[RMDB]
RNA sequence: GGGAACGACUCGAGUAGAGUCGAAAACGCUGGGAUCGAGAGUAGUACGCUGGAGCUCUUAAAGGCUCCUGAAGCGCGCACGGGAGCCUUUAAGAGCGUUGAAAGCGUACGAUGGUAGAUCCUGUGCUGAAGCGCGCACGGCAACCGAAAGGUGCGAGAUAAAUGCUUUGUUCGCAAAGCAUUUAUCAAAAGAAACAACAACAACAAC
Reactivity to DMS in 0.01 (KOAc 150mM, MgCl2 10mM, bicine 150mM(pH8.5), 24C), signal-to-noise 2, nucleotides 027 to 156: c040g030c040u010g040g010g010a010u000c000g000a300g000a170g000u000a290g000u000a000c000g020c000u000g000g000a060g000c000u000c030u000u000a020a050a060g020g000c000u000c000c000u000g000a010a020g040c030g000c020g030c030a300c010g020g010g000a070g050c000c000u000u000u000a010a040g010a040g020c010g000u000u000g010a110a270a090g010c000g010u000a010c000g020a060u000g010g010u000a250g000a010u000c000c010u000g000u000g020c000u000g000a060a070g030c020g060c000g000c000a300c050g000g060c030a060a130c010c040g010a150a080a200g010g000u000g000c020g000a180